[RMDB]
RNA sequence: GGGAACGACUCGAGUAGAGUCGAAAAUUUGACUCCGUUAAGGACUGAAGACCAACCCCCAACGGAUGCUCUAGCAAGUGUUCUCUGGUUGGCUUGCUAGCUAAGAUUUAAUCAGAGCAUCCUACGUUCGGGAUAAUGAACGAUUCCCGCCUUGAGGGUGAGAGGAUGUGUUCGCACAUCCUCUCACAAAAGAAACAACAACAACAAC
Reactivity to 2A3 in 0.01 (KOAc 150mM, MgCl2 10mM, bicine 150mM(pH8.5), 24C), signal-to-noise 1, nucleotides 027 to 156: u140u040u190g060a050c010u010c000c000g000u020u000a140a110g020g000a100c080u180g090a130a050g070a170c070c000a020a150c010c000c000c000c000a000a000c000g000g000a020u000g010c020u020c000u000a000g000c000a000a000g000u020g010u030u040c010u000c000u000g010g000u000u000g000g000c000u000u000g000c000u030a000g000c000u000a000a000g060a110u100u250u300a050a000u000c010a000g000a000g000c020a060u060c000c000u050a070c000g000u000u000c000g000g000g080a090u090a190a030u060g020a030a000c000g000a020u070u040c000c010c020g000c160c140u180u140g020a080g090g030